[RMDB]
RNA sequence: GGGAACGACUCGAGUAGAGUCGAAAAACACUCGUACGCGAGUGAAGUGAGGUGCAGGACUUAGCUCACUCUGUGAACAGAUCUCGGAUAUCCUAUGUUCACAGUGGCUAAGUUCCGCUCCUCUGAAAAUCAAAUACAGCUUCGGCUGUAUUUGAUUAAAAGAAACAACAACAACAAC
Reactivity to DMS in 0.01 (KOAc 150mM, MgCl2 10mM, bicine 150mM(pH8.5), 24C), signal-to-noise 5, nucleotides 027 to 126: a110c010a010c000u010c010g020u010a110c230g030c020g010a010g030u000g000a050a080g020u010g000a000g030g010u000g000c000a100g010g000a010c000u000u000a010g000c000u020c120a090c120u010c120u020g020u000g000a000a010c000a050g000a140u010c110u040c210g000g010a280u030a070u010c020c120u020a210u010g000u000u000c000a010c000a010g010u000g000g000c000u000a000a010g000u000u000c000c020g010c010u010c010c000u000c000u000g000a090a060
Reactivity to 2A3 in 0.01 (KOAc 150mM, MgCl2 10mM, bicine 150mM(pH8.5), 24C), signal-to-noise 9, nucleotides 027 to 126: a000c000a000c000u010c000g030u050a010c270g010c010g090a000g000u020g040a060a010g210u130g020a010g000g000u020g010c030a060g010g000a000c000u010u010a000g010c030u070c170a060c050u090c080u050g000u000g000a000a000c000a020g060a110u070c140u150c240g110g040a150u110a070u230c020c040u090a080u100g000u000u000c000a000c000a000g000u010g000g000c000u000a000a000g000u020u000c000c000g000c000u000c000c000u000c000u000g030a100a080